[RMDB]
Description:
Structure probing data (2A3 and DMS) for a 207-nucleotide construct. 2A3 adducts were read by reverse transcription with SuperScript II with manganese. The reactions ran in a buffer of 150 mM KOAc, 10 mM MgCl2 and 150 mM bicine (pH 8.5), at 24 C. The DMS profile rests on 2,346 reads. Reactivities are rounded to 0.1 and cut off at 0 and 3.
RNA sequence: GGGAACGACUCGAGUAGAGUCGAAAAGAUAUGGAUGAGUUGGAGGUCACGUGUACUAAGACAGACCUUCGGAAACGAAGGUUCGAGUACAUAGUGACCUAUGAAGACUCAUCCUAAGUCAAAGUUAGACUUGUAUCUUCGGAUACAAGUCUAACAAUCCGUCUUUAGAGUUCGCUCUAAAGACGGAAAAAGAAACAACAACAACAAC
Reactivity to 2A3 in 0.01 (KOAc 150mM, MgCl2 10mM, bicine 150mM(pH8.5), 24C), signal-to-noise 3, nucleotides 027 to 156: g040a010u080a030u110g000g000a000u010g010a010g010u010u020g060g080a030g000g000u000c000a000c010g000u000g000u000a000c010u070a070a260g110a110c080a090g030a030c020c030u000u000c010g010g020a060a050a010c010g000a000a000g010g000u060u100c010g020a000g040u000a000c020a000u130a110g000u030g000a000c030c000u040a020u010g010a000a010g010a000c000u000c000a000u000c000c000u000a040a010g010u000c040a200a000a010g010u000u010a010g010a000c000u000u000g000u010a000u010c020u080u090c300g010g000a010u020a010c020a000a000g000u020c000u000a000a000c000a000a000
Reactivity to DMS in 0.01 (KOAc 150mM, MgCl2 10mM, bicine 150mM(pH8.5), 24C), signal-to-noise 1, nucleotides 027 to 156: g030a150u000a240u000g020g040a010u000g000a020g030u000u000g000g020a050g030g030u010c000a000c040g000u000g010u000a010c000u010a100a210g010a140c210a030g000a040c000c000u000u000c010g060g000a190a050a280c030g050a020a020g000g020u010u010c130g010a120g020u000a000c000a000u010a070g080u000g010a010c000c000u000a010u010g010a150a300g010a020c000u000c070a010u000c000c000u000a000a100g040u000c050a070a040a220g000u000u000a010g020a050c000u000u000g010u010a000u000c000u000u000c280g020g000a040u000a010c000a000a000g030u000c000u000a000a010c000a060a090